[RMDB]
RNA sequence: GGGAACGACUCGAGUAGAGUCGAAAAGAUUUAGGUUCGCCUAAAUCAAAACUGUGCAGGGAUCGCCACCCGUCAGCGCGUUGCGCCCACGGGUGCCUUUCCGAAAAGUCGUCGGUUCGCCGACGACCCUAAGCGGAAAGUUCGCUUUCCGCUUAGGAAAAGAAACAACAACAACAAC
Reactivity to 2A3 in 0.01 (KOAc 150mM, MgCl2 10mM, bicine 150mM(pH8.5), 24C), signal-to-noise 2, nucleotides 027 to 126: g000a000u010u010u020a030g020g010u020u050c240g070c020c010u010a000a000a010u000c000a000a070a000a050c110u120g040u170g200c080a090g000g030g050a040u040c030g060c070c020a000c000c000c000g030u050c050a000g000c010g020c100g290u260u300g030c000g000c000c030c020a000c010g010g000g000u010g020c000c000u000u010u000c000c000g050a050a050a020a050g010u010c000g000u010c000g010g030u040u060c160g040c090c000g000a000c000g000a000c000
Reactivity to DMS in 0.01 (KOAc 150mM, MgCl2 10mM, bicine 150mM(pH8.5), 24C), signal-to-noise 4, nucleotides 027 to 126: g000a020u000u010u000a010g000g000u000u000c280g010c000c000u000a000a010a000u010c000a080a060a080a100c090u010g020u020g010c170a130g010g010g000a010u000c050g000c180c010a010c000c000c000g010u000c170a050g020c000g020c010g010u010u000g030c000g000c000c030c300a010c010g000g010g030u000g000c050c010u000u000u000c000c000g020a060a090a060a100g010u000c000g010u000c000g000g000u000u000c240g010c010c010g010a010c000g000a000c000

Source information: This 177-nucleotide RNA was probed chemically with 2A3 and DMS. For 2A3, 3,623 sequencing reads were counted. DMS adducts were read by reverse transcription with MarathonRT. Values cover nucleotides 27 to 126.